RNA sequence: GGGAACGACUCGAGUAGAGUCGAAAACGUAGCGCAUAUCGCGGCAUUAAUAUGCUAUAGCAUAUCGUAAUUACGCGCGAUCGAUUAGCAUUAAUCGGCCGAUCGAUUAGCCGAUAUUAGCGCGCGCAAUCGCGAUCAGUUUCGACUGAUCGCGAUUAAAAGAAACAACAACAACAAC
Reactivity to 2A3 in 0.01 (KOAc 150mM, MgCl2 10mM, bicine 150mM(pH8.5), 24C), signal-to-noise 2, nucleotides 027 to 126: c020g020u080a070g020c020g030c020a010u020a000u020c040g000c000g050g000c010a010u040u100a080a060u040a000u060g010c040u140a130u120a300g000c010a020u010a010u040c020g090u030a080a070u170u150a070c090g000c000g000c020g060a010u020c000g000a010u010u030a020g030c070a040u000u160a060a070u090c050g090g030c020c000g040a050u040c000g010a020u100u080a060g010c030c010g000a000u010a010u010u110a040g000c030g020c010g000c000g010c020
Reactivity to DMS in 0.01 (KOAc 150mM, MgCl2 10mM, bicine 150mM(pH8.5), 24C), signal-to-noise 2, nucleotides 027 to 126: c030g000u010a060g000c000g060c010a110u000a010u000c020g030c090g020g020c080a040u010u000a100a040u020a020u000g010c000u000a150u030a100g000c020a040u000a020u010c170g010u010a060a040u000u000a100c130g000c080g010c040g010a030u000c010g000a030u000u000a050g010c060a060u000u010a090a080u000c240g010g000c000c020g010a000u000c020g010a040u000u000a120g030c040c120g000a030u000a020u000u000a120g030c020g010c040g000c040g000c200

An RNA of 177 nucleotides, treated with 2A3 and DMS and read out base by base. 2A3 adducts were read by reverse transcription with SuperScript II with manganese. The RNA was probed in 150 mM KOAc, 10 mM MgCl2 and 150 mM bicine (pH 8.5) at 24 C. DMS adducts were read by reverse transcription with MarathonRT.